RNA sequence: GGGAACGACUCGAGUAGAGUCGAAAAGAUAUGGAUCCAUGAAGCUGCAAACUAUCAUUCGGAAACGAAUGGAUAGGACGUAUAGCUUCCAUGGAUCCUAAGUCAAAGUUACGGUUCGCCGUAACAACACGUUAGGACGGUUCGCCGUCCUAACGUGAAAAGAAACAACAACAACAAC
Reactivity to DMS in 0.01 (KOAc 150mM, MgCl2 10mM, bicine 150mM(pH8.5), 24C), signal-to-noise 2, nucleotides 027 to 126: g010a000u000a010u000g030g010a010u000c010c000a010u000g000a000a010g030c000u000g080c110a140a030a030c000u000a000u000c000a020u010u000c000g010g000a020a020a030c010g020a000a020u000g020g030a000u000a000g000g030a300c210g030u010a080u030a000g040c010u000u010c160c130a000u000g020g010a000u010c000c000u000a000a020g000u000c000a080a080a150g010u000u000a000c010g000g000u030u030c300g020c000c000g020u000a040a000c010a120a200
Reactivity to 2A3 in 0.01 (KOAc 150mM, MgCl2 10mM, bicine 150mM(pH8.5), 24C), signal-to-noise 2, nucleotides 027 to 126: g000a020u000a000u040g010g000a000u010c010c000a000u020g010a000a000g030c050u300g180c300a140a000a020c000u000a000u020c010a020u000u010c000g000g000a000a000a020c010g000a020a000u080g130g130a020u010a000g010g000a000c160g160u240a300u300a300g030c000u000u000c060c000a010u000g000g000a000u010c000c000u020a000a000g000u010c000a000a000a180g000u030u010a010c010g050g090u030u080c300g000c100c030g000u000a010a000c000a010a020
Structure probing data (DMS and 2A3) for a 177-nucleotide construct. Reactivities are given for positions 27 through 126.